Structure probing data (2A3 and DMS) for a 177-nucleotide construct.
[RMDB]
RNA sequence: GGGAACGACUCGAGUAGAGUCGAAAACCUGGUGAAGGGAGAUUCCGGAACGUUUAGCAUUUGAGGGACAAAGCCGCCCCCGGGCGCUCCCCUCGGAGAUGUUCCAGGUGGGUUCACAUCCCCAACCGUAUAUAGUUGAGUUCGCUCAACUAUAUACAAAAGAAACAACAACAACAAC
Reactivity to 2A3 in 0.01 (KOAc 150mM, MgCl2 10mM, bicine 150mM(pH8.5), 24C), signal-to-noise 2, nucleotides 027 to 126: c000c010u000g040g010u020g060a050a020g020g020g000a060g010a030u170u030c020c030g000g020a000a000c000g010u050u070u110a090g070c060a150u040u050u230g020a020g000g000g000a010c030a050a070a020g030c120c070g010c010c020c000c030c060g050g000g020c020g010c000u000c000c000c000c000u010c000g020g000a010g000a020u030g020u000u000c000c010a020g100g070u100g030g050g000u100u130c050a040c010a120u020c000c010c000c010a000a010c010c000
Reactivity to DMS in 0.01 (KOAc 150mM, MgCl2 10mM, bicine 150mM(pH8.5), 24C), signal-to-noise 2, nucleotides 027 to 126: c010c000u010g020g030u000g000a100a100g000g000g000a080g000a160u000u000c020c010g000g010a030a020c020g010u020u000u020a070g010c100a140u010u010u010g010a040g000g000g020a040c060a110a080a080g010c070c100g040c010c010c000c190c300g010g020g040c020g000c040u000c070c000c010c020u000c010g000g010a030g000a030u000g010u000u000c000c000a100g010g020u010g010g010g000u000u010c060a080c130a180u010c010c000c000c030a220a040c040c060

Values cover nucleotides 27 to 126. Conditions: 150 mM KOAc, 10 mM MgCl2 and 150 mM bicine (pH 8.5), 24 C. The data come from the RNA Mapping Database (RMDB), library 15KREP. The 2A3 profile rests on 2,099 reads. Values are in units of 0.01, from 0 to 300, in steps of 10. In probing experiments dimethyl sulfate is read out at A N1 and C N3, which are open when not base-paired.